This 177-nucleotide RNA was probed chemically with DMS. The reactions ran in a buffer of 150 mM KOAc, 10 mM MgCl2 and 150 mM bicine (pH 8.5), at 24 C. The DMS profile rests on 608 reads. It was measured as part of the RMDB library TTRINS. Reactivities are given for positions 27 through 126.

[RMDB]
RNA sequence: GGGAACGACUCGAGUAGAGUCGAAAAGAUAUGGACUGUGAACUACAAAUGAAGCUGCGUUGAAACAUGCUUAGGUCGGAAACGACCUAAGCAUGUGGAGCAGUGGAAGUUUGCACAGUCCUAAGUCGUCGUGUCAUAAGUUCGCUUAUGACACGACAAAAGAAACAACAACAACAAC
Reactivity to DMS in 0.01 (KOAc 150mM, MgCl2 10mM, bicine 150mM(pH8.5), 24C), signal-to-noise 1, nucleotides 027 to 126: g010a120u010a300u030g000g000a050c000u070g000u000g010a120a200c160u020a300c000a030a020a000u000g050a300a300g000c000u000g010c000g000u000u030g010a210a300a040c000a000u000g000c010u000u000a000g010g050u000c000g010g000a120a060a200c010g000a000c000c000u000a000a000g000c000a000u000g020u000g050g000a090g010c000a010g010u000g000g000a090a160g000u010u010u010g000c000a000c000a000g000u000c000c060u000a010a120g010u000c140